Record summary: This 177-nucleotide RNA was probed chemically with 2A3 and DMS. For 2A3 the reverse transcriptase was SuperScript II with manganese. DMS adducts were read by reverse transcription with MarathonRT. The reactions ran in a buffer of 150 mM KOAc, 10 mM MgCl2 and 150 mM bicine (pH 8.5), at 24 C. Reactivities are given for positions 27 through 126.
[RMDB]
RNA sequence: GGGAACGACUCGAGUAGAGUCGAAAAAUUAAAUGUGAUGAAGAUUGUGUAUUCCUAGUAGAUAGUACUGGAAAUAUUAACAUGAUUUCACAAGAUACUGAAUUAGUAGCUCAUGUUCAUCCAGAAGCUAACUAACGGUCUUCGGACCGUUAGUUAGAAAAGAAACAACAACAACAAC
Reactivity to 2A3 in 0.01 (KOAc 150mM, MgCl2 10mM, bicine 150mM(pH8.5), 24C), signal-to-noise 2, nucleotides 027 to 126: a020u150u110a040a070a070u090g030u050g010a060u050g030a000a020g030a060u090u120g020u010g000u040a130u040u070c010c010u010a010g050u010a020g050a300u110a050g080u010a030c020u010g000g030a010a000a010u100a030u030u110a030a030c030a020u140g000a020u100u020u020c090a090c030a100a020g020a040u050a010c040u040g060a160a110u060u020a110g050u040a010g000c020u020c050a040u060g030u030u010c010a010u010c020c000a030g020a150a020g030
Reactivity to DMS in 0.01 (KOAc 150mM, MgCl2 10mM, bicine 150mM(pH8.5), 24C), signal-to-noise 3, nucleotides 027 to 126: a090u010u010a060a070a090u000g000u020g000a030u010g000a060a040g000a110u000u010g030u000g000u010a030u000u000c060c000u010a000g010u000a040g020a200u010a080g000u020a010c000u010g000g000a010a010a020u000a030u000u000a120a060c080a040u000g000a200u000u000u000c040a030c050a050a050g010a100u000a050c060u000g000a070a120u010u000a040g010u000a050g010c040u000c040a040u000g000u000u000c060a060u010c030c030a060g000a130a160g000